Chemical mapping of a 177-nucleotide RNA with 2A3 and DMS. DMS adducts were read by reverse transcription with MarathonRT. Conditions: 150 mM KOAc, 10 mM MgCl2 and 150 mM bicine (pH 8.5), 24 C. It was measured as part of the RMDB library OK2TST. In probing experiments dimethyl sulfate is read out at A N1 and C N3, which are open when not base-paired.
RNA sequence: GGGAACGACUCGAGUAGAGUCGAAAAGAAUCUAUUAAAGUAUUAGUGCCACUCUUGUGUGUAUACUAGUGCUCAUGGGCGUGGAGGUCCACAUGUGUAUGGACAUGUACAUGUACACAUGUGAGCAAAAUCAUAGUGCGUUCGCGCACUAUGAUUUAAAAGAAACAACAACAACAAC
Reactivity to 2A3 in 0.01 (KOAc 150mM, MgCl2 10mM, bicine 150mM(pH8.5), 24C), signal-to-noise 2, nucleotides 027 to 126: g000a040a080u090c070u060a090u130u210a300a080a010g040u020a120u080u160a070g110u050g070c020c010a020c000u060c080u130u140g000u020g000u000g000u060a000u020a120c110u130a060g100u020g030c000u000c020a040u030g030g010g020c030g020u030g070g030a060g010g080u020c020c010a000c020a010u010g000u040g000u010a010u020g060g040a020c050a080u160g040u080a070c060a110u130g020u010a010c000a000c000a010u000g020u030g030a030g010c000a000
Reactivity to DMS in 0.01 (KOAc 150mM, MgCl2 10mM, bicine 150mM(pH8.5), 24C), signal-to-noise 3, nucleotides 027 to 126: g010a160a060u000c040u010a110u010u010a100a100a110g010u000a050u000u010a060g010u000g010c060c010a020c020u010c160u010u000g010u000g010u000g030u000a060u000a080c150u010a050g020u000g010c000u000c050a050u000g010g010g000c050g040u000g010g010a300g020g000u000c030c000a040c000a000u000g010u000g010u000a030u010g000g010a100c170a080u010g040u010a080c180a100u010g000u000a010c010a000c000a010u000g010u000g010a060g000c070a060